[RMDB]
RNA sequence: GGGAACGACUCGAGUAGAGUCGAAAAUUCAAGGCAAGCUGAUCUCUACUGUGACACUGUCAUCAAAACAAUGUGCUUCUAUUACUCCAGACAGAUUCUUCAAAGGGCUUGUGAAACACAAUAUCAGUAAGAGAUUGAGCACACUCAAUACCUUAGAGUUCUACUGUAGGUUCGCCUACAGUAGAACAAAAGAAACAACAACAACAAC
Reactivity to 2A3 in 0.01 (KOAc 150mM, MgCl2 10mM, bicine 150mM(pH8.5), 24C), signal-to-noise 7, nucleotides 027 to 156: u080u040c030a040a010g050g000c040a050a080g000c010u010g010a020u020c010u000c000u010a010c010u030g030u050g080a030c060a030c180u090g030u070c050a140u070c040a100a100a050a090c060a060a090u100g020u020g050c020u050u050c020u040a120u090u090a090c030u030c060c010a020g020a040c010a030g090a210u170u060c040u110u080c070a080a080a080g040g000g000c040u060u080g020u030g070a060a070a000c040a000c010a060a050u060a050u190c010a000g010u020a170a030g010a010g000a010u000u060g090a010g000c020a020c000a020c080u110c040a060a120u100a170c000c030u080u070a060g030a000
Reactivity to DMS in 0.01 (KOAc 150mM, MgCl2 10mM, bicine 150mM(pH8.5), 24C), signal-to-noise 2, nucleotides 027 to 156: u000u000c080a030a050g020g080c070a090a200g010c040u020g020a050u010c000u010c010u000a040c010u010g000u020g020a150c040a140c070u000g010u000c030a120u020c100a050a060a070a100c060a090a130u000g000u000g010c000u010u000c010u010a140u000u000a050c000u020c010c010a120g020a300c110a130g000a160u000u010c030u020u000c070a080a100a050g010g030g020c010u010u010g000u010g010a040a030a050c040a030c000a050a130u000a120u010c040a050g000u000a040a080g000a040g000a060u000u020g010a060g070c000a050c130a060c060u000c020a060a080u000a020c010c000u000u000a090g020a240

Chemical mapping of a 207-nucleotide RNA with 2A3 and DMS. DMS adducts were read by reverse transcription with MarathonRT. For 2A3, 5,358 sequencing reads were counted.